[RMDB]
The record gives the reactivity of an RNA of 177 nucleotides to DMS and 2A3.
2A3 adducts were read by reverse transcription with SuperScript II with manganese.

RNA sequence: GGGAACGACUCGAGUAGAGUCGAAAAUACUUUUAACGUGUAGGAAGGCGUGAAGGUAACAUUGAAGAUUCAGUGUGAACUGGAUUGAAGUUGCCUUUAGUGCAGAUCUUGAUGGUAGUAGCAAAUAAAUAAUCGAAGCAUUCGUGCUUCGAUUAUUAAAAGAAACAACAACAACAAC
Reactivity to DMS in 0.01 (KOAc 150mM, MgCl2 10mM, bicine 150mM(pH8.5), 24C), signal-to-noise 8, nucleotides 027 to 126: u030a050c040u010u010u020u020a060a100c070g020u000g010u010a050g010g010a070a080g000g010c020g010u010g010a010a010g000g010u000a010a010c000a120u020u020g000a200a230g000a010u000u000c000a000g000u000g020u040g010a160a020c010u000g000g000a000u000u000g000a090a070g010u000u000g000c000c000u000u000u000a040g020u030g010c030a060g000a070u010c020u000u010g000a040u010g010g010u010a050g010u000a040g010c150a040a060a080u020a050
Reactivity to 2A3 in 0.01 (KOAc 150mM, MgCl2 10mM, bicine 150mM(pH8.5), 24C), signal-to-noise 6, nucleotides 027 to 126: u070a020c020u050u070u070u160a120a030c030g030u060g070u120a030g070g050a080a020g060g000c030g020u030g030a000a000g000g010u020a000a000c010a110u110u230g050a100a030g000a040u010u000c000a000g020u010g030u070g110a100a040c000u000g000g000a010u000u050g040a040a020g000u010u010g000c000c000u000u000u010a060g010u050g020c020a020g010a170u030c020u040u060g040a070u080g060g030u020a040g020u020a010g110c070a040a060a070u180a050